The data come from the RNA Mapping Database (RMDB), library OK1LIB. An RNA of 177 nucleotides, treated with 2A3 and read out base by base.

RNA sequence: GGGAACGACUCGAGUAGAGUCGAAAACACUUCCAUUUCCUUCAGUCAUUAGAGGUGGAAGGGAGGGGUCUCCAAGUUUGGAGAUUGAGCAGAUGAGGCUUGGGAUGCCCCUGCUUUGACUUCAGCCGCGACAAUCGUCCUUCGGGACGAUUGUCGCAAAAGAAACAACAACAACAAC
Reactivity to 2A3 in 0.01 (KOAc 150mM, MgCl2 10mM, bicine 150mM(pH8.5), 24C), signal-to-noise 1, nucleotides 027 to 126: c070a040c000u000u020c000c000a110u120u040u040c000c000u020u080c060a100g110u110c030a220u090u300a020g000a010g180g030u040g080g010a050a030g000g010g000a110g000g020g060g120u080c000u000c000c000a060a070g090u000u240u180g150g000a020g000a020u020u160g000a030g000c000a000g020a180u280g000a130g040g000c000u040u040g080g210g000a170u300g000c000c000c000c000u020g020c000u000u010u000g070a110c020u000u050c060a070g070c040c010
The 2A3 profile rests on 405 reads. 2A3 adducts were read by reverse transcription with SuperScript II with manganese.